[RMDB]
RNA sequence: GGGAACGACUCGAGUAGAGUCGAAAAAUGGUGGCGCCGUGCGGACCUAUAGAGCCAGGGGUGUCGCGUGGGGCCACGCCACCGGUGACAGCAUCGGUGGAGCAAGUGGUUCCCGCCUCGAUGCUGGUCUACGGAGGGCGUUCGCGCCCUUCGUAGGAAAAGAAACAACAACAACAAC
Reactivity to 2A3 in 0.01 (KOAc 150mM, MgCl2 10mM, bicine 150mM(pH8.5), 24C), signal-to-noise 1, nucleotides 027 to 126: a020u090g070g010u020g000g000c130g070c080c000g010u000g010c010g020g020a000c000c000u050a040u050a160g080a020g090c030c020a040g020g020g000g030u300g290u300c030g000c000g000u040g000g000g080g000c000c000a000c000g000c000c000a000c000c000g010g010u010g050a080c060a060g120c000a090u000c000g000g000u040g000g010a000g000c010a010a080g040u050g040g000u000u020c000c000c000g000c000c000u040c050g010a020u060g010c030u040g020g030